[RMDB]
RNA sequence: GGGAACGACUCGAGUAGAGUCGAAAACGAGAGCGAUUCGUCGCUCUCGAAAGAGUGCACGGCAGCACAAGAAAAGCCGUAGAAAAGCAGAGCCGACUGCAAAAACUCCCAUGUUCGCAUGGGAGAAGUACCGUUAUAGGUUCGCCUAUAACGGUACAAAAGAAACAACAACAACAAC
Reactivity to DMS in 0.01 (KOAc 150mM, MgCl2 10mM, bicine 150mM(pH8.5), 24C), signal-to-noise 2, nucleotides 027 to 126: c030g020a000g000a020g000c000g020a010u000u020c160g010u000c010g020c020u000c000u000c000g000a040a060a070g010a160g000u010g000c040a080c000g000g000c000a260g000c000a030c020a120a150g000a070a060a130a120g010c010c010g020u010a090g010a110a090a110a120g000c000a020g000a180g000c090c160g010a230c040u000g000c030a100a060a130a090a200c000u000c000c000c000a000u000g010u000u020c200g040c000a010u000g000g000g010a000g000a020a040
Reactivity to 2A3 in 0.01 (KOAc 150mM, MgCl2 10mM, bicine 150mM(pH8.5), 24C), signal-to-noise 2, nucleotides 027 to 126: c000g000a000g000a000g020c030g010a030u050u070c210g040u010c000g120c010u000c000u010c000g000a010a000a000g090a000g000u040g000c040a000c060g000g000c020a070g010c010a040c050a090a040g120a010a110a020a010g030c040c030g020u060a030g150a070a200a020a010g000c010a010g010a030g020c010c080g120a130c030u020g000c050a010a060a080a050a110c000u000c000c000c000a000u010g040u050u050c240g000c110a010u000g020g000g000a000g000a000a000
Chemical mapping of a 177-nucleotide RNA with DMS and 2A3. The DMS profile rests on 1,498 reads. Source: RMDB library M2PK50, as collected in RNAgym. Values cover nucleotides 27 to 126. Conditions: 150 mM KOAc, 10 mM MgCl2 and 150 mM bicine (pH 8.5), 24 C. DMS adducts were read by reverse transcription with MarathonRT. For 2A3, 2,763 sequencing reads were counted.